[RMDB]
Annotation
The record gives the reactivity of an RNA of 177 nucleotides to 2A3 and DMS. For DMS, 6,332 sequencing reads were counted. For 2A3 the reverse transcriptase was SuperScript II with manganese. Source: RMDB library TTRDES, as collected in RNAgym. High 2A3 reactivity points to a flexible backbone, as in loops and unpaired stretches. For 2A3, 8,217 sequencing reads were counted.

RNA sequence: GGGAACGACUCGAGUAGAGUCGAAAAGAUAUGGACCUAAGACACACGCACAUCGGAAACGAUGUGAACUACGUGGUCUCAGGUCCUAAGUCAAACCUGGGCUGUACCUUCGGGUACAGCCCAGGAACAUAUAAGAGUCGUUCGCGACUCUUAUAUGAAAAGAAACAACAACAACAAC
Reactivity to 2A3 in 0.01 (KOAc 150mM, MgCl2 10mM, bicine 150mM(pH8.5), 24C), signal-to-noise 3, nucleotides 027 to 126: g050a040u100a060u150g000g000a010c000c000u000a030a010g020a000c120a010c020a000c300g030c020a000c000a000u000c010g000g040a090a060a040c020g000a000u000g000u000g020a020a010c060u220a040c050g000u000g000g000u020c000u000c010a000g000g000u010c000c000u010a030a000g030u020c040a090a030a110c020c000u000g000g000g000c010u010g020u030a010c000c000u060u130c300g060g000g000u000a010c020a010g000c050c010c010a000g000g000a000a000
Reactivity to DMS in 0.01 (KOAc 150mM, MgCl2 10mM, bicine 150mM(pH8.5), 24C), signal-to-noise 4, nucleotides 027 to 126: g010a040u000a300u010g010g000a010c000c000u000a030a000g010a010c010a130c050a010c010g000c010a010c000a020u000c000g000g000a130a120a200c000g010a010u000g020u000g010a050a040c150u010a300c050g020u000g010g010u000c010u000c010a010g010g000u000c000c000u000a000a060g000u000c030a110a140a200c000c000u000g000g000g010c000u000g000u000a020c000c010u000u010c270g030g010g010u000a010c000a000g010c000c010c000a000g000g000a020a070